[RMDB]
RNA sequence: GGGAACGACUCGAGUAGAGUCGAAAAAGGUUGGACCAUCAGUCAGGACUGUCUAGGUCAGGGAAGCCAAGAUGUCUGAAGAGAGAGGAAAGAUUUGGGGCUGCAGUAGGGCAAGACCCCAUGGGAGGAAGCAGCCAGGAAGAUGCCGGCACCCCUGGUCUUACGAGUACUUCGGUACUCGUAAGACAAAAGAAACAACAACAACAAC
Reactivity to 2A3 in 0.01 (KOAc 150mM, MgCl2 10mM, bicine 150mM(pH8.5), 24C), signal-to-noise 2, nucleotides 027 to 156: a000g110g000u090u040g010g040a040c020c010a050u090c030a000g090u050c020a020g050g030a070c030u080g030u080c070u130a070g040g000u140c040a020g040g030g010a070a000g030c020c020a000a020g010a020u070g020u100c120u090g050a110a020g010a020g000a000g020a010g040g010a130a040a010g000a040u070u070u040g010g000g000g030c010u010g000c010a040g100u200a130g030g040g000c020a050a050g060a180c000c000c000c040a030u030g010g010g000a050g000g000a070a000g030c020a010g020c010c020a020g000g020a000a030g050a040u060g040c030c030g020g030c020a090c000c000c000c000u010g080
Description: Structure probing data (2A3) for a 207-nucleotide construct. Conditions: 150 mM KOAc, 10 mM MgCl2 and 150 mM bicine (pH 8.5), 24 C. 2A3 adducts were read by reverse transcription with SuperScript II with manganese. It was measured as part of the RMDB library OK3TST. For 2A3, 989 sequencing reads were counted.